[RMDB]
Structure probing data (DMS and 2A3) for a 177-nucleotide construct. Conditions: 150 mM KOAc, 10 mM MgCl2 and 150 mM bicine (pH 8.5), 24 C.

RNA sequence: GGGAACGACUCGAGUAGAGUCGAAAACUCGAAUCUUUCGAGAUUCGAGACUCUCGAAGAGUCAAUAAGAUCGAAAAGAUCGCCGAGCAUAAAAUAGACACAAUGCUGCUUGAUUCGUCAAGCAGAAUGUAUUUGCCUUAUUCGUAAGGCAAAUACAAAAAGAAACAACAACAACAAC
Reactivity to DMS in 0.01 (KOAc 150mM, MgCl2 10mM, bicine 150mM(pH8.5), 24C), signal-to-noise 4, nucleotides 027 to 126: c020u010c000g000a020a020u000c030u010u000u010c140g010a010g020a050u000u000c000g000a130g010a010c010u000c000u000c030g020a300a130g000a000g010u000c000a130a130u000a080a120g000a010u010c010g000a100a040a100a210g000a020u000c010g000c060c000g010a100g010c170a060u000a060a080a070a090u010a060g010a100c150a060c190a080a080u020g020c000u000g000c000u000u000g000a020u000u010c200g030u000c000a020a000g000c000a010g000a070a050
Reactivity to 2A3 in 0.01 (KOAc 150mM, MgCl2 10mM, bicine 150mM(pH8.5), 24C), signal-to-noise 4, nucleotides 027 to 126: c010u000c000g010a010a010u020c010u030u110u190c230g090a020g040a050u000u000c000g000a000g010a020c010u000c000u000c020g060a230a090g010a000g010u000c020a020a000u100a030a010g000a000u020c010g040a130a210a100a090g010a000u010c010g000c020c010g070a080g050c040a100u220a170a220a140a060u170a120g110a040c040a010c010a110a170u170g020c000u000g000c010u000u000g010a000u040u050c200g030u010c090a000a000g010c010a000g000a000a020
Values are in units of 0.01, from 0 to 300, in steps of 10. It was measured as part of the RMDB library M2PK50. Reactivities are given for positions 27 through 126.